[RMDB]
Conditions: 150 mM KOAc, 10 mM MgCl2 and 150 mM bicine (pH 8.5), 24 C. The record gives the reactivity of an RNA of 177 nucleotides to 2A3 and DMS. Source: RMDB library OK2TRN, as collected in RNAgym. For DMS the reverse transcriptase was MarathonRT. For DMS, 1,391 sequencing reads were counted.

RNA sequence: GGGAACGACUCGAGUAGAGUCGAAAACGUGCAUGAUCCCCGCGCAAUUUGGGUCUCCGACGACGGACUUGUAUAACCCAUGAUCGUCACGGCAGAACAGGUUAGGACGUGGCUAGGGCUGCCGGCACGCUAAGCAUGGGUUCGCCCAUGCUUAGCGAAAAGAAACAACAACAACAAC
Reactivity to 2A3 in 0.01 (KOAc 150mM, MgCl2 10mM, bicine 150mM(pH8.5), 24C), signal-to-noise 1, nucleotides 027 to 126: c000g040u040g040c050a060u100g050a140u100c000c000c000c000g040c030g000c030a070a110u000u070u140g160g000g010u040c010u000c060c020g080a070c050g050a030c000g000g060a040c010u060u010g080u090a140u060a210a110c000c000c030a100u090g060a190u070c010g000u020c020a020c030g030g000c030a010g000a060a030c010a010g030g040u060u060a100g090g170a030c070g110u070g010g000c010u090a090g070g000g050c010u020g000c050c000g020g000c070a020
Reactivity to DMS in 0.01 (KOAc 150mM, MgCl2 10mM, bicine 150mM(pH8.5), 24C), signal-to-noise 2, nucleotides 027 to 126: c190g020u000g020c040a100u010g040a190u000c050c010c030c160g040c070g000c090a050a090u000u000u010g020g010g010u000c060u000c050c070g050a090c080g000a030c050g030g000a080c040u000u010g040u000a060u020a160a120c090c090c020a110u010g000a090u020c030g020u000c050a170c010g030g020c060a030g030a020a070c070a250g030g010u000u020a060g010g000a090c070g020u000g000g000c020u000a070g010g000g010c000u000g020c000c020g020g020c070a130
The 2A3 profile rests on 1,397 reads. 2A3 adducts were read by reverse transcription with SuperScript II with manganese.